[RMDB]
RNA sequence: GGGAACGACUCGAGUAGAGUCGAAAAUCACUAACAUCAUUGUGGGCAGCAUACCCCCACAAUUCUUGGUUUGUAGGACUAUCAGACAUGCAAAGCGCAGUGAAUCAGGCGAUAAGCCUUAUUUGAGUCCAAAUGAUUUACUGAAUGAACAACAGCAGCGGUAACUGAUAUUCGUAUCAGUUACCGCAAAAGAAACAACAACAACAAC
Reactivity to 2A3 in 0.01 (KOAc 150mM, MgCl2 10mM, bicine 150mM(pH8.5), 24C), signal-to-noise 2, nucleotides 027 to 156: u070c020a010c040u070a170a050c030a120u190c010a000u040u010g000u000g020g010g000c050a040g050c060a200u100a170c070c000c000c000c010a010c000a000a000u030u050c070u050u020g040g000u020u010u000g030u030a070g000g030a030c010u030a020u050c000a000g020a010c000a010u030g070c030a040a230a130g100c090g000c050a010g000u030g090a030a020u010c010a000g000g000c000g080a200u120a210a050g000c000c000u000u000a050u090u060u060g000a000g010u030c040c040a000a020a180u110g000a030u060u140u020a020c000u040g070a040a090u110g000a190a040c070a050a000c010a080g070c060a010